[RMDB]
Source information: This 177-nucleotide RNA was probed chemically with DMS. The DMS profile rests on 2,606 reads.

RNA sequence: GGGAACGACUCGAGUAGAGUCGAAAAGAUAUGGAGGUGGAACCAAGGAGUUUAGAGCUUGGACCUACACCGGUCGGAAACGACCGUUGUAGCUAGCUCUAAACUCCUUGGUUUGACCUCCUAAGUCCACUUCACUCUAGUUCGCUAGAGUGAAGUGAAAAGAAACAACAACAACAAC
Reactivity to DMS in 0.01 (KOAc 150mM, MgCl2 10mM, bicine 150mM(pH8.5), 24C), signal-to-noise 2, nucleotides 027 to 126: g010a090u040a300u000g010g000a040g000g010u000g010g000a000a010c000c000a010a020g010g010a020g010u000u000u000a000g020a030g000c000u000u000g020g010a130c300c020u000a010c010a020c040c000g010g000u010c000g000g000a140a110a230c010g010a020c010c000g000u000u010g010u000a010g000c030u000a020g020c010u010c000u000a000a000a010c000u000c000c000u000u000g000g010u000u000u000g000a010c000c030u000c000c010u000a000a090g000u020c080

Source information: It was measured as part of the RMDB library TTRINS. DMS adducts were read by reverse transcription with MarathonRT.